The data come from the RNA Mapping Database (RMDB), library OK1LIB. This 177-nucleotide RNA was probed chemically with 2A3 and DMS. Values cover nucleotides 27 to 126. The RNA was probed in 150 mM KOAc, 10 mM MgCl2 and 150 mM bicine (pH 8.5) at 24 C.
[RMDB]
RNA sequence: GGGAACGACUCGAGUAGAGUCGAAAAUGGUGAAUCACAAGGUCUGACCUUCAACUGUGGAGUGAUUGUUCUUUCCGAGGAAGCAAAACUAUGUUCUGAUGCGCAUAUAAUGGUGGCAAUAACGAGACGAGAUACGUCUGUUCGCAGACGUAUCUCGAAAAGAAACAACAACAACAAC
Reactivity to 2A3 in 0.01 (KOAc 150mM, MgCl2 10mM, bicine 150mM(pH8.5), 24C), signal-to-noise 3, nucleotides 027 to 126: u220g010g000u080g010a080a010u120c020a060c120a180a070g060g010u000c070u050g050a090c000c000u040u080c170a140a150c040u000g000u060g120g000a100g030u100g030a160u090u000g040u090u010c000u060u090u040c000c040g040a010g070g040a110a000g000c000a000a000a160a000c040u050a000u130g050u030u020c040u060g020a060u090g010c000g000c110a020u030a020u000a120a180u220g060g000u020g040g000c060a060a040u070a120a050c060g000a010g020a080
Reactivity to DMS in 0.01 (KOAc 150mM, MgCl2 10mM, bicine 150mM(pH8.5), 24C), signal-to-noise 2, nucleotides 027 to 126: u010g010g000u000g010a020a060u020c090a020c050a050a100g020g100u020c040u060g020a070c120c030u020u010c100a020a050c060u030g000u140g020g010a110g000u000g000a000u090u010g000u050u000c000u000u030u050c010c040g000a170g050g030a080a070g050c100a060a060a100a040c030u040a130u000g000u000u030c080u000g000a020u000g000c030g000c080a040u000a160u050a080a130u070g000g000u000g000g000c050a050a100u110a010a050c090g020a090g000a070